[RMDB]
Source: RMDB library OK2TRN, as collected in RNAgym. This 177-nucleotide RNA was probed chemically with DMS and 2A3. The RNA was probed in 150 mM KOAc, 10 mM MgCl2 and 150 mM bicine (pH 8.5) at 24 C. The 2A3 profile rests on 1,590 reads. Values cover nucleotides 27 to 126.
RNA sequence: GGGAACGACUCGAGUAGAGUCGAAAAAGAUGGCCACAGAAGCUCCCAGGGAGAAGACAGGAAGACAACACCAGAGAGCUUUCCAGCGAAUGCAAAUCCUCCAUGACAUUCCUGUCUUGGAGGGAGCGCAUUUCCUAGGAUUCGUCCUAGGAAAUGCAAAAGAAACAACAACAACAAC
Reactivity to DMS in 0.01 (KOAc 150mM, MgCl2 10mM, bicine 150mM(pH8.5), 24C), signal-to-noise 2, nucleotides 027 to 126: a090g000a060u010g010g000c040c040a110c120a150g020a140a100g000c000u000c030c000c000a200g000g010g030a110g000a060a040g000a040c060a060g000g000a060a020g010a070c060a070a060c060a090c110c060a160g000a050g000a080g000c050u000u000u000c000c050a140g010c100g000a040a020u010g000c070a040a090a160u010c020c010u010c070c030a060u000g000a060c040a070u000u000c090c060u010g010u000c000u000u000g010g010a030g000g030g010a010g020c160
Reactivity to 2A3 in 0.01 (KOAc 150mM, MgCl2 10mM, bicine 150mM(pH8.5), 24C), signal-to-noise 1, nucleotides 027 to 126: a000g120a110u150g020g000c010c030a050c060a080g130a210a020g040c010u000c030c010c020a060g120g020g030a090g020a060a000g010a010c030a020g070g020a010a000g080a050c040a090a020c020a130c030c020a020g040a010g000a000g110c000u060u000u000c070c000a050g020c040g080a050a030u070g040c070a040a080a070u040c030c010u000c030c010a020u090g000a010c020a050u090u060c000c000u000g000u030c040u000u000g020g010a010g000g000g020a000g030c030